[RMDB]
RNA sequence: GGGAACGACUCGAGUAGAGUCGAAAAAGUGCAUUGCAUGAAGGCUCACAAUUUCACAAGUGGGCUUAUCCGAUGGUGCCUCAAUUGGAUCAAGUAGAAUGGGGAGACGCACCGGUUGGAAGCACCAGCUCCUACUAGUGUUCGCACUAGUAGGAGCAAAAGAAACAACAACAACAAC
Reactivity to DMS in 0.01 (KOAc 150mM, MgCl2 10mM, bicine 150mM(pH8.5), 24C), signal-to-noise 2, nucleotides 027 to 126: a070g000u020g000c010a250u000u060g030c150a100u000g030a090a050g000g020c020u000c000a000c010a050a190u040u000u070c180a080c300a090a090g000u020g020g000g010c000u000u000a020u000c000c070g050a160u040g000g000u000g000c000c060u000c020a050a030u000u000g000g000a110u060c280a070a070g070u000a110g000a090a080u000g000g000g000g050a140g010a080c210g000c060a090c000c010g000g000u030u020g000g010a040a140g000c070a030c020c010a160
Reactivity to 2A3 in 0.01 (KOAc 150mM, MgCl2 10mM, bicine 150mM(pH8.5), 24C), signal-to-noise 5, nucleotides 027 to 126: a000g030u030g010c070a120u100u270g010c020a010u090g120a140a030g030g040c000u030c000a020c020a050a190u110u300u260c170a120c070a190a160g020u010g010g000g000c000u020u030a020u030c010c020g020a020u030g010g020u020g000c000c020u020c020a100a220u100u080g080g030a090u140c060a150a090g150u070a100g170a200a120u100g000g000g050g030a030g000a020c020g040c060a030c000c010g000g000u010u030g000g040a030a010g020c000a020c030c050a000
This 177-nucleotide RNA was probed chemically with DMS and 2A3. 2A3 is a SHAPE reagent: it acylates the 2'-hydroxyl of flexible nucleotides of all four kinds. The data come from the RNA Mapping Database (RMDB), library OK1LIB. Conditions: 150 mM KOAc, 10 mM MgCl2 and 150 mM bicine (pH 8.5), 24 C. For 2A3, 2,891 sequencing reads were counted.